RNA sequence: GGGAACGACUCGAGUAGAGUCGAAAAUGGACUUUUUACAGUUCCUACUUAUCCGGUUUUAACGCUGUCUUAUUGGCGCAAAGGUUUACGGAUAAACAACUAAUAAUUAAACCUUUUGUGUGCGAAAAUUGGACGUUUAGGUUCGCCUAAACGUCAAGUAAAUAUGGGUGUUCGCACCCAUAUUUACAAAAGAAACAACAACAACAAC
Reactivity to 2A3 in 0.01 (KOAc 150mM, MgCl2 10mM, bicine 150mM(pH8.5), 24C), signal-to-noise 3, nucleotides 027 to 156: u090g020g020a020c050u050u130u100u130u210a080c150a030g010u140u080c010c000u040a110c040u020u000a000u000c010c000g040g000u000u000u000u010a020a010c010g000c030u070g040u030c050u120u240a190u140u270g030g000c000g000c020a000a020a010g010g000u000u000u000a000c000g010g000a010u010a050a100a000c030a010a020c060u170a070a150u110a180a030u130u110a020a000a000c010c000u010u010u100u060g120u020g010u040g020c080g100a070a050a100a150u160u130g100g010a020c010g000u000u010u000a010g020g030u020u020c130g060c040c000u000a000a000a010c020g000u000c000a000a010
Reactivity to DMS in 0.01 (KOAc 150mM, MgCl2 10mM, bicine 150mM(pH8.5), 24C), signal-to-noise 1, nucleotides 027 to 156: u000g010g000a110c000u010u000u000u020u010a120c130a140g000u000u000c000c010u020a060c080u010u030a010u000c000c010g010g010u000u020u030u020a110a080c080g020c010u010g030u000c200u000u010a180u000u000g000g000c020g030c000a040a010a020g030g010u000u000u000a110c010g000g000a000u000a030a040a210c030a080a130c090u000a070a160u010a110a130u010u000a010a010a000c020c020u010u000u000u000g000u010g010u010g030c000g000a090a070a090a220u000u000g000g000a010c000g000u000u000u000a020g010g000u000u030c300g020c000c000u010a000a010a000c000g000u000c000a010a100